[RMDB]
RNA sequence: GGGAACGACUCGAGUAGAGUCGAAAAGCGCGGUGAGUGGAUUUUUCUUUCUUUCGUUACACUCACGAAAAUCAGUCGAAAAGAAAAGAAAAGAUAGAAAGAAAGAGACUGAGGAAAACGCGCGAAAGGGUAUAUGUAUCUUCGGAUACAUAUACCCAAAAGAAACAACAACAACAAC
Reactivity to DMS in 0.01 (KOAc 150mM, MgCl2 10mM, bicine 150mM(pH8.5), 24C), signal-to-noise 3, nucleotides 027 to 126: g030c000g020c040g000g000u000g010a000g020u000g000g000a040u070u000u000u000u000c060u000u000u000c000u000u010u010c220g020u000u000a210c010a000c010u000c000a010c040g000a060a030a090a120u000c000a010g000u000c030g000a160a100a080a140g010a060a060a040a110g000a060a050a040a120g010a160u010a040g000a070a140a080g030a130a050a160g000a300g000a010c020u000g000a010g000g000a100a030a120a300c000g000c010g000c000g000a050a060a130
Reactivity to 2A3 in 0.01 (KOAc 150mM, MgCl2 10mM, bicine 150mM(pH8.5), 24C), signal-to-noise 3, nucleotides 027 to 126: g000c000g010c020g000g000u000g010a000g000u000g010g050a060u070u080u010u000u020c000u040u010u000c010u010u030u050c000g010u000u060a040c000a010c000u000c000a000c000g010a010a020a010a040u040c000a000g030u010c030g020a080a020a070a120g070a080a050a020a010g080a070a170a100a000g100a050u300a140g140a060a160a010g170a070a050a000g080a000g000a000c000u000g000a000g010g000a030a180a080a050c000g020c000g000c000g020a130a060a000